[RMDB]
RNA sequence: GGGAACGACUCGAGUAGAGUCGAAAAGACUCGGACGCGAACCCGUAAGGUGAAACUUUCACAUUUAUUGGGGAGUACACUCGAGGAGUGGAAGGCGGGGAGACGGGGAUCCCGGGCUUACCCACGGCUCUUAUACAGACUUCGGUCUGUAUAAGAGAAAAGAAACAACAACAACAAC
Reactivity to DMS in 0.01 (KOAc 150mM, MgCl2 10mM, bicine 150mM(pH8.5), 24C), signal-to-noise 2, nucleotides 027 to 126: g000a070c010u000c010g020g010a120c140g030c020g000a230a290c020c000c030g020u000a030a030g000g010u000g000a020a100a190c220u020u000u000c010a010c010a070u010u000u000a010u000u010g020g000g010g000a300g020u010a130c120a040c000u000c040g020a030g000g030a130g000u000g000g010a120a100g020g000c050g020g000g000g000a070g000a110c090g000g000g010g010a140u010c020c000c040g010g010g010c010u000u000a130c070c020c000a090c190g020g000
Reactivity to 2A3 in 0.01 (KOAc 150mM, MgCl2 10mM, bicine 150mM(pH8.5), 24C), signal-to-noise 2, nucleotides 027 to 126: g000a020c000u000c000g040g070a020c080g020c020g020a050a050c010c010c000g010u000a000a020g000g020u020g060a060a160a200c080u090u140u060c010a010c010a130u030u040u060a060u090u210g000g000g020g000a010g040u030a010c030a010c040u010c010g020a020g000g040a010g000u000g040g030a100a040g050g020c110g000g010g000g010a060g010a050c050g000g010g000g040a000u050c010c010c000g040g150g000c040u000u060a090c000c010c000a010c030g070g000

An RNA of 177 nucleotides, treated with DMS and 2A3 and read out base by base.
The 2A3 profile rests on 1,992 reads.
For 2A3 the reverse transcriptase was SuperScript II with manganese.
It was measured as part of the RMDB library 15KREP.
The reactions ran in a buffer of 150 mM KOAc, 10 mM MgCl2 and 150 mM bicine (pH 8.5), at 24 C.
For DMS, 1,048 sequencing reads were counted.